[RMDB]
RNA sequence: GGGAACGACUCGAGUAGAGUCGAAAAUUACCCGGCUUCGGCCGGGUAAACAGCAGAGCCGUCGCGUAGGAUGGCGGCUACUCAAGGGUUGUUCCCACGCGAGAAACGGGUCGUUCGCGACCCGUAAGCUAUUCACGGUAUUCGUACCGUGAAUAGCAAAAGAAACAACAACAACAAC
Reactivity to DMS in 0.01 (KOAc 150mM, MgCl2 10mM, bicine 150mM(pH8.5), 24C), signal-to-noise 1, nucleotides 027 to 126: u000u000a000c000c010c020g000g000c010u000u000c200g070g050c020c010g030g030g020u000a000a000a020c090a040g050c090a130g020a070g010c000c010g040u000c000g000c170g030u010a140g020g010a050u000g020g010c000g000g000c040u000a010c010u010c000a100a160g020g010g000u000u000g020u000u000c000c010c000a070c180g000c070g000a110g010a060a110a000c010g000g010g020u000c000g000u000u050c180g020c000g000a030c000c000c000g000u010a000a040